[RMDB]
Structure probing data (DMS and 2A3) for a 177-nucleotide construct. For 2A3, 6,424 sequencing reads were counted. Values cover nucleotides 27 to 126. In probing experiments dimethyl sulfate is read out at A N1 and C N3, which are open when not base-paired. Conditions: 150 mM KOAc, 10 mM MgCl2 and 150 mM bicine (pH 8.5), 24 C.

RNA sequence: GGGAACGACUCGAGUAGAGUCGAAAAGAUAUGGACGUCCCGGAGGAGCGUACCGGGUCGGAAACGACCCAGUACGCGCGAAACUCCCGGGACGUCCUAAGUCAAAAGGAUGCGUUCGCGCAUCCAACUGAAUACCAUACUUCGGUAUGGUAUUCAGAAAAGAAACAACAACAACAAC
Reactivity to DMS in 0.01 (KOAc 150mM, MgCl2 10mM, bicine 150mM(pH8.5), 24C), signal-to-noise 3, nucleotides 027 to 126: g000a030u000a240u010g000g000a030c000g010u000c000c000c010g020g000a040g030g010a090g050c000g040u000a000c000c000g030g000g060u010c000g010g000a040a040a120c000g010a000c000c000c000a030g010u000a000c000g030c010g020c170g020a130a120a180c020u010c070c020c050g010g000g000a000c000g010u000c000c000u000a010a050g000u000c020a120a090a130a150g010g000a000u000g020c010g020u010u000c190g030c010g010c010a000u000c000c010a030a090
Reactivity to 2A3 in 0.01 (KOAc 150mM, MgCl2 10mM, bicine 150mM(pH8.5), 24C), signal-to-noise 2, nucleotides 027 to 126: g020a010u040a020u080g000g010a030c060g010u030c060c080c120g000g010a060g050g060a150g020c000g000u000a020c010c030g000g000g010u000c020g000g010a040a040a000c000g000a000c000c000c010a000g000u010a000c010g000c000g030c000g050a100a130a050c020u040c000c050c010g010g020g060a000c000g000u010c000c000u000a010a010g010u000c000a000a010a020a100g010g020a010u010g020c000g030u050u140c300g000c000g000c230a010u000c010c000a000a010